[RMDB]
RNA sequence: GGGAACGACUCGAGUAGAGUCGAAAAUGCCGGGCAAGUCCCCCCAUGCCCGUUCCACGGCUCCCUUCCAGAAGGGCGGGGGUGGCCUGGAGCGUCGGGCCCCAGCAGUCCGUGGAAUUCACCCUCUGGAUAAGUGAUAGUUCGCUAUCACUUAUCCAAAAGAAACAACAACAACAAC
Reactivity to DMS in 0.01 (KOAc 150mM, MgCl2 10mM, bicine 150mM(pH8.5), 24C), signal-to-noise 1, nucleotides 027 to 126: u000g000c300c030g040g000g030c020a030a050g010u010c030c000c000c010c050c000a300u000g020c000c010c000g000u000u010c010c000a020c040g020g000c000u010c030c000c020u000u000c040c070a210g030a110a100g010g040g010c300g000g000g010g010g030u000g000g010c010c000u010g010g010a150g000c160g030u000c070g000g010g000c000c000c010c020a070g000c120a090g000u010c030c000g000u000g000g020a020a060u000u000c090a150c000c030c030u000c130u000